[RMDB]
RNA sequence: GGGAACGACUCGAGUAGAGUCGAAAACGCUGGGCAUCGUAACAUCAUACUACCACCCAAACAUCGAUGAAACAACUGAAGCGCGCACGGUUGUGGAGAUGUGGGUGGUAGUAUGUGGAUGCCUGUGCUGAAGCGCGCACGGCAACCGAAAGGUGCGGUACGGCGGUAAGUUCGCUUACCGCCGUACAAAAGAAACAACAACAACAAC
Reactivity to 2A3 in 0.01 (KOAc 150mM, MgCl2 10mM, bicine 150mM(pH8.5), 24C), signal-to-noise 1, nucleotides 027 to 156: c000g000c000u040g000g000g030c000a010u000c010g140u140a130a030c040a290u220c000a000u030a000c000u000a000c000c000a000c000c000c020a060a060a180c000a010u000c000g300a300u030g010a000a010a000c000a000a000c000u020g030a290a020g030c000g020c010g000c000a010c030g010g050u000u000g020u030g020g020a010g020a000u010g030u040g030g010g010u020g010g000u010a000g000u000a000u000g000u000g000g000a000u000g000c000c010u000g000u010g020c010u030g020a090a040g010c010g020c010g000c050a000c000g040g000c010a000a000c030c020g070a100a030a030g040g050u050g010c020g000